[RMDB]
RNA sequence: GGGAACGACUCGAGUAGAGUCGAAAAUUGGUCGUGCCUGCGCUGGCUGCACUAUUAGCCCCGGGGUUGUCCACUACCGGUUCACCGCCGGGGUUCCUGGCUCCGGGAAGUCUAGGUCUAUACAGCAUAUAUCUGGGAAUUUCGAUUCCCAGAUAUAAAAAGAAACAACAACAACAAC
Reactivity to DMS in 0.01 (KOAc 150mM, MgCl2 10mM, bicine 150mM(pH8.5), 24C), signal-to-noise 5, nucleotides 027 to 126: u010u010g010g010u000c050g030u000g000c060c020u000g010c100g030c050u000g010g010c060u010g020c080a060c070u000a100u010u000a120g010c090c000c010c010g020g000g000g000u000u010g010u000c030c030a080c120u010a110c150c050g000g000u000u000c140a050c150c120g010c010c010g010g010g010g020u000u000c020c010u010g000g010c010u000c010c050g010g000g000a060a040g020u000c030u000a050g000g000u000c030u010a090u010a100c060a050g010c080a210
Reactivity to 2A3 in 0.01 (KOAc 150mM, MgCl2 10mM, bicine 150mM(pH8.5), 24C), signal-to-noise 1, nucleotides 027 to 126: u100u090g050g010u030c020g030u070g010c010c000u020g000c030g040c060u030g040g040c030u030g000c030a020c030u080a140u180u080a020g000c000c000c000c000g000g000g000g030u070u110g020u030c020c000a020c060u220a270c040c090g000g000u160u110c030a050c050c060g120c050c000g010g000g000g010u020u000c000c000u000g010g020c010u000c020c000g030g010g030a040a010g000u020c040u060a030g000g000u010c020u020a150u030a120c030a010g000c040a040

Notes:
The data come from the RNA Mapping Database (RMDB), library OK2TRN. Chemical mapping of a 177-nucleotide RNA with DMS and 2A3. For 2A3, 1,670 sequencing reads were counted. For 2A3 the reverse transcriptase was SuperScript II with manganese. The reactions ran in a buffer of 150 mM KOAc, 10 mM MgCl2 and 150 mM bicine (pH 8.5), at 24 C.